The data come from the RNA Mapping Database (RMDB), library TTRDEL. This 177-nucleotide RNA was probed chemically with DMS and 2A3. For 2A3, 19,135 sequencing reads were counted.
[RMDB]
RNA sequence: GGGAACGACUCGAGUAGAGUCGAAAAGAUAUGGAGGUAGGGAGCUGGUGUCGGAAACGACAUGACCAGCAUCGAUCUACCCUCCUAAGUCAAAAGCGUUGAUACGAGUUCGCUCGUAUCAACGCAAGGGAAGUAAUAAGUUCGCUUAUUACUUCCCAAAAGAAACAACAACAACAAC
Reactivity to DMS in 0.01 (KOAc 150mM, MgCl2 10mM, bicine 150mM(pH8.5), 24C), signal-to-noise 5, nucleotides 027 to 126: g000a030u000a300u000g000g010a010g010g010u000a010g000g010g000a020g060c000u000g030g010u000g000u000c000g010g000a080a070a180c000g000a010c010a100u020g020a100c010c010a010g000c000a210u000c160g000a040u020c000u000a020c110c040c010u000c000c000u000a040a120g000u010c040a080a110a130a100g000c000g000u010u000g000a020u000a000c000g000a010g010u000u010c260g020c000u000c000g020u000a010u000c000a000a000c000g010c000a010a020
Reactivity to 2A3 in 0.01 (KOAc 150mM, MgCl2 10mM, bicine 150mM(pH8.5), 24C), signal-to-noise 5, nucleotides 027 to 126: g010a000u070a020u140g010g000a000g020g000u020a010g030g010g020a030g000c010u020g010g030u040g010u010c010g000g040a080a060a040c000g010a000c020a090u230g280a080c010c020a000g020c010a030u270c010g010a020u000c000u010a030c050c030c010u000c000c000u030a130a020g080u050c040a020a060a120a070g000c000g010u010u000g000a010u000a000c000g000a000g020u070u130c260g120c150u000c000g010u010a000u000c000a000a000c000g000c000a000a000